[RMDB]
RNA sequence: GGGAACGACUCGAGUAGAGUCGAAAAGGCUGGGCUUCGGAAGAGGGCGUGAGAGAUCCAGCCUACCGAUUCAGGCUUCGCCUUCCGGCCUGAAUCGGGAAAACUCAGGAAGGCUGUGGGAGAGGACACCCUGCCCGUGGGAGGUCCCUCCCGAGAGGGGUUCUAUUAACUUCGGUUAAUAGAACCCAAAAGAAACAACAACAACAAC
Reactivity to 2A3 in 0.01 (KOAc 150mM, MgCl2 10mM, bicine 150mM(pH8.5), 24C), signal-to-noise 2, nucleotides 027 to 156: g000g000c020u010g000g010g010c030u090u100c090g040g090a070a020g060a140g060g070g060c040g040u110g020a120g010a000g010a070u030c010c010a000g000c010c000u010a010c000c000g000a000u000u000c000a000g000g020c030u100u140c110g010c000c050u000u000c000c000g000g010c000c000u000g000a000a010u000c000g010g010g000a010a000a000a000c210u240c090a020g000g000a000a000g000g000c000u000g020u040g000g000g010a040g030a150g000g000a000c010a030c010c000c000u020g050c000c040c040g060u140g000g000g010a140g020g020u000c000c020c000u000c000c000c000g000a010g010a020g010
Chemical mapping of a 207-nucleotide RNA with 2A3. Reactivities are rounded to 0.1 and cut off at 0 and 3. For 2A3 the reverse transcriptase was SuperScript II with manganese. The RNA was probed in 150 mM KOAc, 10 mM MgCl2 and 150 mM bicine (pH 8.5) at 24 C. The data come from the RNA Mapping Database (RMDB), library RSTRND.